Description: Chemical mapping of a 177-nucleotide RNA with DMS. The RNA was probed in 150 mM KOAc, 10 mM MgCl2 and 150 mM bicine (pH 8.5) at 24 C.
RNA sequence: GGGAACGACUCGAGUAGAGUCGAAAAGAUAUGGAGAUAAAGGUUCUGAUGACCAACCAUGGGAUUAUAUGGUCGGAAACGACCAUAGAAUCCCAUGGUUGCAAGGAACCGAUUGUCUCCUAAGUCACUGGUAGCAUAUCUUCGGAUAUGCUACCAGAAAAGAAACAACAACAACAAC
Reactivity to DMS in 0.01 (KOAc 150mM, MgCl2 10mM, bicine 150mM(pH8.5), 24C), signal-to-noise 1, nucleotides 027 to 126: g000a030u020a300u030g000g050a000g000a020u020a030a100a270g000g000u010u000c010u000g000a100u010g000a190c300c000a000a030c010c000a020u000g000g010g000a010u020u000a040u000a000u000g000g000u000c000g000g000a060a060a110c000g000a050c000c000a000u000a000g000a000a030u000c000c000c000a000u000g000g010u000u000g000c000a050a050g030g010a000a000c000c000g000a000u000u010g000u000c000u020c000c000u010a000a190g000u010c040a300
For DMS the reverse transcriptase was MarathonRT. Reactivities are given for positions 27 through 126. The DMS profile rests on 938 reads.